[RMDB]
RNA sequence: GGGAACGACUCGAGUAGAGUCGAAAAUAGAGCUACUGGAUGGCCGAUGGGCCCCACAAGGUUACUGACGUCAGCCAAACUCCGAAUGCCAGAGUGUGAGAGCGCGGCAGUGAGACUGCGGGGGAUAUAUUGCAGAAACAUUCGUGUUUCUGCAAUAAAAAGAAACAACAACAACAAC
Reactivity to 2A3 in 0.01 (KOAc 150mM, MgCl2 10mM, bicine 150mM(pH8.5), 24C), signal-to-noise 7, nucleotides 027 to 126: u120a010g120a020g020c040u110a040c040u080g080g030a080u060g070g000c000c000g020a050u080g030g030g020c010c000c000c000a190c030a050a040g040g000u060u080a130c000u020g010a010c000g030u060c050a010g010c010c000a030a070a050c020u010c010c020g110a170a060u170g060c030c020a030g040a030g050u070g020u050g050a140g000a020g020c010g000c010g030g000c000a010g010u040g080a080g020a030c020u020g010c040g010g020g000g000g010a010u030a000
Reactivity to DMS in 0.01 (KOAc 150mM, MgCl2 10mM, bicine 150mM(pH8.5), 24C), signal-to-noise 7, nucleotides 027 to 126: u030a080g000a090g010c040u000a060c090u010g000g020a080u010g000g010c020c010g000a130u020g000g010g000c020c010c010c050a070c200a110a220g010g010u020u000a050c020u010g000a220c300g010u010c060a110g000c020c020a060a090a120c010u010c010c040g000a120a070u030g000c110c060a110g010a050g000u010g000u010g000a100g000a090g000c040g000c060g000g000c020a020g000u000g000a080g010a150c020u000g000c190g010g010g000g000g000a090u010a090